[RMDB]
RNA sequence: GGGAACGACUCGAGUAGAGUCGAAAAGAUAUGGACUGGGAGGGGGACUGUGGUAAGGGAGAGCUGUGUCGGAAACGACAUCUAAGCUCUUUGAUCUUACCACAGUCCCCCUCCACAGUCCUAAGUCCAUAAUUAUUUGGUUCGCCAAAUAAUUAUGAAAAGAAACAACAACAACAAC
Reactivity to DMS in 0.01 (KOAc 150mM, MgCl2 10mM, bicine 150mM(pH8.5), 24C), signal-to-noise 2, nucleotides 027 to 126: g000a090u010a300u010g020g010a010c000u010g050g000g000a040g010g010g000g040g020a040c010u000g050u000g010g020u000a010a000g020g010g000a020g020a010g030c010u010g010u000g020u000c020g000g010a090a060a250c000g010a000c000a010u000c250u000a150a060g020c000u000c000u010u000u030g000a110u010c000u000u000a010c020c000a000c020a000g010u000c000c000c000c000c000u010c000c000a010c020a000g010u000c020c000u000a010a060g030u000c040